Chemical mapping of a 207-nucleotide RNA with 2A3.
Conditions: 150 mM KOAc, 10 mM MgCl2 and 150 mM bicine (pH 8.5), 24 C.
Source: RMDB library OK3TST, as collected in RNAgym.
[RMDB]
RNA sequence: GGGAACGACUCGAGUAGAGUCGAAAAAUCACGCCAGUAUUUUUUGGCGGGAAAACCAGAGUCAUCCUGUUGGUAAGUACCAAGCAUGUAAAACUCGUUAACAGCUUGAUAUGGACAACUUCCUUUUGCAACACUUAAGCUGUAAGCUUUGGCAGCAGCGACGAUACAUAUUCGUAUGUAUCGUCGCAAAAGAAACAACAACAACAAC
Reactivity to 2A3 in 0.01 (KOAc 150mM, MgCl2 10mM, bicine 150mM(pH8.5), 24C), signal-to-noise 2, nucleotides 027 to 156: a000u020c020a030c040g000c010c010a120g080u120a300u100u230u100u070u090u130g010g000c000g000g000g000a050a090a000a000c040c010a020g010a000g060u020c000a020u020c010c070u000g000u020u000g010g000u070a020a040g020u000a000c000c000a080a000g000c080a150u030g000u130a000a080a170a130c170u160c210g170u120u200a080a020c000a010g000c000u000u000g010a010u030a000u080g050g030a030c020a060a020c000u100u150c030c040u160u230u160u150g030c090a120a040c040a060c210u080u100a070a020g000c000u010g040u130a040a060g050c020u110u120u060g100g000c050a020g000c000a000